[RMDB]
RNA sequence: GGGAACGACUCGAGUAGAGUCGAAAAGAUAUGGAUCGUGGAACUCUUCUUGGAUUUAUGGUCACAGUAGGAUCGGAAACGAUCCUAUCACAGCCAUUGUCAGAAGGUAGUACACGAUCCUAAGUCACGAUCAUAAUCAGUUCGCUGAUUAUGAUCGAAAAGAAACAACAACAACAAC
Reactivity to 2A3 in 0.01 (KOAc 150mM, MgCl2 10mM, bicine 150mM(pH8.5), 24C), signal-to-noise 3, nucleotides 027 to 126: g010a020u080a040u230g000g010a000u020c020g010u020g020g010a020a020c020u010c020u110u020c040u140u290g220g000a080u300u300u170a020u050g040g010u180c050a030c020a070g020u010a000g000g010a000u000c020g000g020a090a100a020c010g000a000u010c000c010u010a010u010c000a010c030a000g020c000c010a010u010u020g020u010c000a000g000a000a010g020g000u010a010g000u000a010c000a000c020g000a010u010c000c010u000a000a010g000u000c020a000
Reactivity to DMS in 0.01 (KOAc 150mM, MgCl2 10mM, bicine 150mM(pH8.5), 24C), signal-to-noise 4, nucleotides 027 to 126: g020a060u000a300u000g000g020a020u000c000g000u000g010g010a270a110c120u010c000u000u000c000u000u000g010g010a040u000u020u000a000u020g000g010u000c050a200c300a300g000u000a010g030g000a020u000c010g010g030a110a120a230c010g010a010u000c000c000u000a000u000c030a120c300a300g000c000c000a010u000u010g020u000c010a050g010a040a020g020g000u000a040g010u000a210c010a010c010g000a010u000c000c000u000a020a090g000u000c030a290